Chemical mapping of a 177-nucleotide RNA with DMS and 2A3.
High 2A3 reactivity points to a flexible backbone, as in loops and unpaired stretches.
Conditions: 150 mM KOAc, 10 mM MgCl2 and 150 mM bicine (pH 8.5), 24 C.
[RMDB]
RNA sequence: GGGAACGACUCGAGUAGAGUCGAAAAGAAAGAAAGAAAGAAACUGUAAGGUGUUGCGUAGGCGUUGUGCACAGUGUUGGUUUUUGAACGGGACUGUGCAUCUCACCCGCGCAAAGCAUUGCAGAAACACUAUAGUCGCAUUCGUGCGACUAUAGUGAAAAGAAACAACAACAACAAC
Reactivity to DMS in 0.01 (KOAc 150mM, MgCl2 10mM, bicine 150mM(pH8.5), 24C), signal-to-noise 4, nucleotides 027 to 126: g010a100a100a090g010a120a090a100g000a100a050a090g010a100a080a100c010u010g010u000a010a000g000g020u030g000u000u010g000c020g000u000a050g000g020c090g010u000u000g000u000g010c000a000c010a000g000u000g010u010u010g020g030u000u010u010u040u030g010a070a050c010g010g000g000a030c020u000g010u000g010c000a000u000c020u000c020a020c000c000c000g000c040g000c000a010a010a080g010c030a090u010u000g010c000a000g000a090a070a140
Reactivity to 2A3 in 0.01 (KOAc 150mM, MgCl2 10mM, bicine 150mM(pH8.5), 24C), signal-to-noise 9, nucleotides 027 to 126: g070a010a050a010g110a030a100a010g110a040a100a010g090a040a090a020c000u000g010u030a020a020g060g010u060g030u090u010g000c010g000u010a070g000g000c030g000u010u010g000u000g010c000a000c010a010g000u080g300u190u150g150g080u020u040u040u130u250g150a030a010c000g010g010g020a000c000u000g000u000g000c000a010u000c000u010c010a020c000c000c000g000c000g000c000a000a010a000g030c020a010u000u010g000c000a000g020a030a040a010